[RMDB]
RNA sequence: GGGAACGACUCGAGUAGAGUCGAAAAUGCAAUUAGUUCGCUAAUUGCACAUGACUAGUCGCUAGAAAACGAUCAAAACUAGCGACUAGACUUUAUUGAUCGGGGGCCUGGCUUUCGAGCCAGGCAACUCAGAAUGGUUAUUCGUAACCAUUCUGAGAAAAGAAACAACAACAACAAC
Reactivity to DMS in 0.01 (KOAc 150mM, MgCl2 10mM, bicine 150mM(pH8.5), 24C), signal-to-noise 5, nucleotides 027 to 126: u000g000c000a010a000u000u000a010g000u000u010c220g020c010u000a000a010u000u010g000c010a020c120a070u010g000a300c020u000a010g010u000c000g000c000u000a010g000a050a020a050a140c040g020a020u000c010a040a060a160a120c010u000a010g000c000g010a010c000u000a010g000a060c140u000u010u010a070u010u000g010a010u000c020g010g000g010g000g000c000c000u000g000g010c000u000u000u010c150g010a020g020c000c000a010g000g000c020a000a020
Reactivity to 2A3 in 0.01 (KOAc 150mM, MgCl2 10mM, bicine 150mM(pH8.5), 24C), signal-to-noise 6, nucleotides 027 to 126: u040g000c000a000a000u000u010a010g020u030u050c140g000c110u000a010a010u000u020g100c000a010c020a080u160g010a010c000u000a000g000u000c000g010c000u010a010g040a090a190a040a050c070g040a060u050c030a020a040a020a100c000u000a000g010c000g020a000c000u000a000g000a000c000u170u190u140a170u100u110g050a030u060c020g000g010g000g050g000c000c000u000g010g000c000u060u070u090c150g010a000g000c010c000a000g000g000c000a000a000

The record gives the reactivity of an RNA of 177 nucleotides to DMS and 2A3. Reactivities are given for positions 27 through 126. The 2A3 profile rests on 11,920 reads. Source: RMDB library M2PK50, as collected in RNAgym.